[RMDB]
This 177-nucleotide RNA was probed chemically with DMS and 2A3. The 2A3 profile rests on 1,152 reads. Values cover nucleotides 27 to 126.
RNA sequence: GGGAACGACUCGAGUAGAGUCGAAAAACAAUGUGUGAAGUAAUUUCAUGUGUUGCAAAAAGCCACAUAAUCUGCUGAUAUAUAAGGCGACGAGACAUAUGUCGGUAGGAAUCGUCGAAUCAACGCGAUUAUCCGACUCGUUCGCGAGUCGGAUAAUAAAAGAAACAACAACAACAAC
Reactivity to DMS in 0.01 (KOAc 150mM, MgCl2 10mM, bicine 150mM(pH8.5), 24C), signal-to-noise 2, nucleotides 027 to 126: a070c020a020a000u010g000u000g010u010g000a010a050g060u010a140a140u090u010u010c000a030u000g000u000g020u010u000g000c090a010a060a100a130a140g000c050c030a080c140a030u020a050a040u000c000u020g000c000u000g000a050u020a020u000a080u030a060a210g000g000c040g020a160c100g010a180g020a110c140a060u020a050u040g000u020c020g020g000u000a010g010g000a030a080u010c070g010u000c050g000a060a000u020c200a010a040c090g000c030g010
Reactivity to 2A3 in 0.01 (KOAc 150mM, MgCl2 10mM, bicine 150mM(pH8.5), 24C), signal-to-noise 2, nucleotides 027 to 126: a010c020a010a010u040g050u050g000u010g020a000a000g050u250a150a300u050u040u020c030a000u000g000u000g080u070u050g000c000a000a000a000a200a050g040c050c010a130c000a040u160a030a080u060c030u000g000c000u000g020a000u000a000u000a010u000a100a070g080g000c030g000a040c080g050a080g020a030c050a030u010a040u040g030u030c000g010g070u010a010g030g030a040a100u050c010g110u020c010g040a040a040u130c050a020a100c020g000c000g100